[RMDB]
RNA sequence: GGGAACGACUCGAGUAGAGUCGAAAAGAAGGAAUGUUCGCAUUCCUUCAAAAAGCGUACUACAGCUGAUGUGACCCUCCAUCGAUCGCUCCCAAAUAGGAGCGGGAGGAGCACAUACAGCUGUAUCGCAAAAAAUACAUACUUUCGAGUAUGUAAAGGAACACUCUUGAUUCGUCAAGAGUGUUCCAAAAGAAACAACAACAACAAC
Reactivity to 2A3 in 0.01 (KOAc 150mM, MgCl2 10mM, bicine 150mM(pH8.5), 24C), signal-to-noise 2, nucleotides 027 to 156: g020a010a000g020g050a000a000u020g000u060u070c080g000c130a000u000u000c000c000u000u000c000a020a000a000a000a000g020c020g040u090a050c100u000a000c050a000g000c000u000g010a000u020g100u170g190a300c010c000c000u010c000c000a140u270c140g270a060u210c090g080c000u060c010c020c030a190a240a050u300a100g000g000a000g030c030g000g010g000a000g020g030a010g070c020a000c000a010u080a150c000a000g010c000u010g000u000a000u000c010g000c000a010a010a010a010a010a010u180a000c030a000u000a000c000u060u010u180c190g000a010g000u000a010u000g000u000a000a000a300